[RMDB]
RNA sequence: GGGAACGACUCGAGUAGAGUCGAAAAUAAUAUUGUUCAUCCUUCCUUCAAAGUCUUUAGAGGUUGUCGGAUCUUAUAUUCGGUAUUUCACAGUAUUCAAAGAUGGUAUAGGGCUUAUAGAUGAGGAGUUCCACUAGGUAUUCGUACCUAGUGGAACAAAAGAAACAACAACAACAAC
Reactivity to 2A3 in 0.01 (KOAc 150mM, MgCl2 10mM, bicine 150mM(pH8.5), 24C), signal-to-noise 2, nucleotides 027 to 126: u090a000a040u080a060u100u130g020u060u020c000a020u040c030c010u000u080c010c010u020u040c030a000a080a030g030u030c040u030u120u120a060g000a010g020g000u020u060g020u030c010g010g010a010u020c060u130u290a210u010a020u170u080c010g030g000u000a040u010u110u060c100a090c010a050g080u110a090u130u130c030a030a020a000g030a040u020g050g000u030a100u030a070g010g000g010c010u070u050a090u080a110g060a040u080g000a050g090g030a070
Reactivity to DMS in 0.01 (KOAc 150mM, MgCl2 10mM, bicine 150mM(pH8.5), 24C), signal-to-noise 2, nucleotides 027 to 126: u000a060a090u000a150u010u000g020u000u000c040a100u010c040c020u000u010c030c010u010u010c100a090a140a140g010u000c060u010u010u000a110g030a050g020g000u010u000g000u000c040g000g010a020u000c160u000u000a080u000a090u010u000c050g020g000u010a050u000u000u000c100a080c140a060g020u000a090u010u020c050a040a080a040g000a020u000g020g000u000a050u010a060g010g010g050c120u000u000a070u010a080g000a120u000g000a060g010g020a190
Record summary: Conditions: 150 mM KOAc, 10 mM MgCl2 and 150 mM bicine (pH 8.5), 24 C. This 177-nucleotide RNA was probed chemically with 2A3 and DMS. DMS adducts were read by reverse transcription with MarathonRT. It was measured as part of the RMDB library OK2TST. For DMS, 1,468 sequencing reads were counted.